[RMDB]
RNA sequence: GGGAACGACUCGAGUAGAGUCGAAAAGAUAUGGAGAGUUGUCAGAGCAGCAUCACUAUUAGGGUCGGAAACGACCCUAACGAAUGAUGCCUGCCAGGCUCUUGGAUUUACUCUCCUAAGUCAAAUCACGCUGUUGGGUUCGCCCAACAGCGUGAAACAUACCUUAAUCGUUCGCGAUUAAGGUAUGAAAAGAAACAACAACAACAAC
Reactivity to 2A3 in 0.01 (KOAc 150mM, MgCl2 10mM, bicine 150mM(pH8.5), 24C), signal-to-noise 3, nucleotides 027 to 156: g010a000u020a000u080g000g000a000g000a000g000u030u040g010u040c020a030g040a020g110c000a010g020c000a010u010c000a010c100u020a010u000u000a000g010g000g000u000c010g030g000a000a040a020c000g000a000c000c020c010u020a000a020c020g000a240a300u020g000a010u010g000c110c000u030g030c070c050a070g100g050c030u020c060u130u120g030g000a010u160u130u170a020c000u000c000u020c000c000u000a030a000g010u000c010a000a040a110u030c000a000c000g000c000u000g010u020u000g010g040g000u050u090c230g060c020c000c000a000a000c000a000g000c000g010u000g000a000a000a000
Reactivity to DMS in 0.01 (KOAc 150mM, MgCl2 10mM, bicine 150mM(pH8.5), 24C), signal-to-noise 2, nucleotides 027 to 156: g020a080u010a120u000g010g010a040g030a050g020u000u000g010u010c030a090g010a090g030c000a160g010c010a020u010c000a030c040u000a100u000u000a000g010g020g030u000c010g000g000a120a100a210c030g000a020c000c000c000u000a000a000c000g020a050a010u000g000a000u000g000c110c060u010g020c160c100a180g040g020c050u010c050u000u000g030g010a060u010u000u010a040c010u000c000u000c000c010u000a020a100g010u000c030a060a120a130u000c000a030c030g060c000u020g010u020u020g020g020g050u010u000c300g000c000c020c010a030a010c000a010g040c000g030u000g000a000a020a110
Background
This 207-nucleotide RNA was probed chemically with 2A3 and DMS. Values cover nucleotides 27 to 156. For DMS, 5,097 sequencing reads were counted. It was measured as part of the RMDB library RNAMAK. The RNA was probed in 150 mM KOAc, 10 mM MgCl2 and 150 mM bicine (pH 8.5) at 24 C. Values are in units of 0.01, from 0 to 300, in steps of 10.